Chemical mapping of a 207-nucleotide RNA with 2A3. For 2A3 the reverse transcriptase was SuperScript II with manganese. The reactions ran in a buffer of 150 mM KOAc, 10 mM MgCl2 and 150 mM bicine (pH 8.5), at 24 C. It was measured as part of the RMDB library RNAMAK.
RNA sequence: GGGAACGACUCGAGUAGAGUCGAAAAGAUAUGGAUCAUGAGCGAGGACAACCUUGGAUUUAGUAGUCGGAAACGACUACUUGUCAGGUUGUCUCCCCACCGCUACAUGAUCCUAAGUCAAAACCGAGACAGCUGAGUUCGCUCAGCUGUCUCGGAACUGAUACUUUUUCUUCGGAAAAAGUAUCAGAAAAGAAACAACAACAACAAC
Reactivity to 2A3 in 0.01 (KOAc 150mM, MgCl2 10mM, bicine 150mM(pH8.5), 24C), signal-to-noise 2, nucleotides 027 to 156: g000a000u010a000u070g000g000a000u000c000a000u000g000a010g010c000g000a020g010g010a010c000a000a020c000c010u140u300g170g000a010u100u020u000a000g000u010a000g010u000c010g000g030a030a020a000c000g000a000c000u000a010c010u020u020g010u000c190a080g000g000u000u020g000u020c000u000c000c000c000c000a040c000c000g020c020u170a300c120a000u010g000a000u000c000c000u000a000a000g000u020c020a000a000a070a160c010c000g000a000g010a000c000a000g000c000u010g000a000g070u130u210c270g130c100u040c010a000g000c000u010g010u000c000u000c000g010g000a000a000